The data come from the RNA Mapping Database (RMDB), library OK3TST. Chemical mapping of a 207-nucleotide RNA with 2A3. The 2A3 profile rests on 480 reads. Reactivities are given for positions 27 through 156.
[RMDB]
RNA sequence: GGGAACGACUCGAGUAGAGUCGAAAAUACAUCUUUAUUAGUAGGUGCUGUUGCUUCAUCUGGCUACACCUUUGGCAUUACGUCCGUUGGUGUCAUACCAUUUGCCACACAGCUCCAAUUUAGACUUAAUGGCCUUGGUGUUACCACCAAUGUGCUCCCAGGCGGAUAUUUUCGAAUAUCCGCCUGGAAAAGAAACAACAACAACAAC
Reactivity to 2A3 in 0.01 (KOAc 150mM, MgCl2 10mM, bicine 150mM(pH8.5), 24C), signal-to-noise 1, nucleotides 027 to 156: u230a000c050a070u110c100u080u180u190a160u120u100a160g140u120a110g050g000u010g010c010u030g000u190u010g020c020u000u140c010a030u010c060u010g000g000c040u000a000c000a060c000c000u070u000u000g040g000c020a060u000u280a020c130g050u200c060c000g000u000u030g000g000u000g070u000c000a060u140a170c000c000a000u040u000u010g050c010c000a020c000a000c000a020g000c000u000c060c000a090a110u060u070u060a010g050a110c020u060u090a060a080u160g100g000c000c000u000u000g000g000u020g050u280u100a100c130c020a000c010c000a000a050u020g060u130g010c000u050c030